[RMDB]
RNA sequence: GGGAACGACUCGAGUAGAGUCGAAAAGCUGAUCGUAAUGUCGCAGCUGGCGUUGCAGUACGCAUAUCAUGCAUGCACAGCUGGUGUUGUACGAUACAUCACGCACGCGACCGCACGUACGACUGUACAAUUACGCAUAUGUGCGUGGCCACGGCCGCAGAUUAUAGACUUUCGAGUCUAUAAUCUGAAAAGAAACAACAACAACAAC
Reactivity to 2A3 in 0.01 (KOAc 150mM, MgCl2 10mM, bicine 150mM(pH8.5), 24C), signal-to-noise 9, nucleotides 027 to 156: g030c060u040g030a040u040c020g020u050a070a070u150g090u180c060g000c120a000g000c010u010g010g000c060g040u070u120g000c010a040g040u130a100c130g050c150a050u090a060u240c130a070u050g000c000a020u030g000c060a080c010a280g000c000u030g020g030u060g020u050u110g020u010a010c020g010a020u020a100c030a030u070c030a010c040g030c010a030c020g030c020g050a110c050c060g030c050a050c070g010u030a010c020g150a160c210u230g000u060a030c060a090a150u220u120a110c080g020c040a040u080a060u300g010u000g000c010g000u020g010g000c030c030a070c050g050g000c020c020g000
Reactivity to DMS in 0.01 (KOAc 150mM, MgCl2 10mM, bicine 150mM(pH8.5), 24C), signal-to-noise 4, nucleotides 027 to 156: g030c030u010g010a060u000c030g030u000a060a090u010g010u000c040g030c010a090g020c030u000g020g020c050g020u000u020g020c000a100g030u000a110c130g050c150a090u000a090u000c090a120u010g030c000a130u000g020c040a110c010a090g030c040u000g030g020u000g020u000u010g010u010a060c060g010a120u000a070c060a090u000c010a090c020g000c010a060c040g000c040g010a100c050c050g020c010a020c050g010u000a030c010g010a130c100u000g020u010a050c040a070a140u010u000a070c060g020c040a060u000a050u000g010u000g010c000g020u010g010g020c010c050a070c050g010g010c030c040g000
An RNA of 207 nucleotides, treated with 2A3 and DMS and read out base by base.
DMS adducts were read by reverse transcription with MarathonRT.
It was measured as part of the RMDB library OK3TST.
The DMS profile rests on 16,050 reads.